[RMDB]
RNA sequence: GGGAACGACUCGAGUAGAGUCGAAAAUGUCACACAGUAGGGAGGGAUGCAAUUAAUUGCAUCUACACCAAGCUCAAGGCUUGGAUUUCGACUAGUGUCGAGUCGUUCCCACUCGCUACGCCCACAAGAAACCUCCAAUAUUCGUAUUGGAGGUUUCAAAAGAAACAACAACAACAAC
Reactivity to DMS in 0.01 (KOAc 150mM, MgCl2 10mM, bicine 150mM(pH8.5), 24C), signal-to-noise 2, nucleotides 027 to 126: u000g020u000c070a100c120a190c150a070g000u010a070g020g000g000a080g000g010g000a010u000g000c000a000a050u000u010a110a070u000u000g010c000a000u000c000u000a070c080a190c030c010a000a010g000c000u010c190a130a080g010g000c010u020u000g000g020a230u000u000u000c010g010a000c010u000a030g000u010g010u000c000g000a010g010u000c000g000u010u000c010c000c000a020c020u010c020g020c050u000a040c040g010c000c000c000a080c190a080a120